[RMDB]
RNA sequence: GGGAACGACUCGAGUAGAGUCGAAAAGAUAUGGAUCCACGACGAUGCUGAACUAUGUGAAAUUUAUAUCGGAAACGAUAUAAAUUUCACACGAAUUCAGAACUACAUCUGCCGUGGAUCCUAAGUCCGUGUAUAGAUCGUUCGCGAUCUAUACACGAAAAGAAACAACAACAACAAC
Reactivity to DMS in 0.01 (KOAc 150mM, MgCl2 10mM, bicine 150mM(pH8.5), 24C), signal-to-noise 2, nucleotides 027 to 126: g010a100u010a300u010g010g020a010u000c030c000a020c010g030a010c010g000a010u000g000c020u010g000a010a030c090u000a150u000g000u000g000a000a030a000u000u000u000a000u010a010u010c000g040g010a160a120a150c000g000a000u010a000u010a010a000a000u010u000u000c000a010c020a000c080g010a040a180u000u000c000a050g010a100a040c110u000a300c030a000u000c010u010g080c000c000g030u000g000g000a010u000c000c000u010a000a070g030u010c060
Reactivity to 2A3 in 0.01 (KOAc 150mM, MgCl2 10mM, bicine 150mM(pH8.5), 24C), signal-to-noise 1, nucleotides 027 to 126: g040a030u130a070u160g000g000a000u000c010c020a000c030g040a020c030g000a010u000g050c010u000g010a040a000c040u070a140u270g010u010g000a000a020a040u000u030u000a000u020a010u000c000g030g020a140a040a060c010g000a010u020a000u010a020a020a000u010u010u000c000a000c000a000c000g060a030a240u010u000c000a010g030a130a000c110u270a070c180a020u040c110u300g010c010c000g000u000g030g040a000u000c010c000u000a010a010g000u000c030

Conditions: 150 mM KOAc, 10 mM MgCl2 and 150 mM bicine (pH 8.5), 24 C. Chemical mapping of a 177-nucleotide RNA with DMS and 2A3. 2A3 adducts were read by reverse transcription with SuperScript II with manganese. The 2A3 profile rests on 2,946 reads. It was measured as part of the RMDB library TTRINS.